RNA sequence: GGGAACGACUCGAGUAGAGUCGAAAAAUGGAAGUUAGGAGUCUGACAUGGUUAAAGUUUAUGCCCCGGCUUCCAGUGCCAAUAUGAGCGUCGGGUUUGAUGUGCUCGGGGCGGCGGUGACACCUGACGCCAGUAAUGCGUUCGCGCAUUACUGGCGAAAAGAAACAACAACAACAAC
Reactivity to 2A3 in 0.01 (KOAc 150mM, MgCl2 10mM, bicine 150mM(pH8.5), 24C), signal-to-noise 1, nucleotides 027 to 126: a010u090g020g020a040a030g010u080u060a210g100g020a060g030u030c020u120g000a040c030a080u060g030g160u170u150a080a200a020g010u110u100u080a080u180g010c000c000c000c000g020g000c010u020u040c000c010a000g050u050g020c000c000a050a060u250a160u210g070a030g010c090g150u020c000g000g090g000u060u140u200g050a110u040g080u120g070c020u040c000g030g000g000g020c000g000g000c060g040g010u120g000a020c030a010c020c010u000g000a010
Reactivity to DMS in 0.01 (KOAc 150mM, MgCl2 10mM, bicine 150mM(pH8.5), 24C), signal-to-noise 2, nucleotides 027 to 126: a080u000g020g000a040a050g010u000u000a060g030g000a050g000u000c180u010g000a060c080a100u010g000g000u000u010a070a130a170g030u000u000u000a060u000g000c020c010c000c020g000g000c000u000u000c010c010a020g010u010g000c000c020a090a130u010a090u000g010a110g010c030g010u000c030g010g020g020u000u000u010g000a070u030g000u000g040c010u000c060g020g020g000g040c120g010g000c010g040g020u000g000a130c090a090c030c040u020g000a120
The record gives the reactivity of an RNA of 177 nucleotides to 2A3 and DMS.
DMS adducts were read by reverse transcription with MarathonRT.
Conditions: 150 mM KOAc, 10 mM MgCl2 and 150 mM bicine (pH 8.5), 24 C.
Reactivities are given for positions 27 through 126.
Source: RMDB library OK2TST, as collected in RNAgym.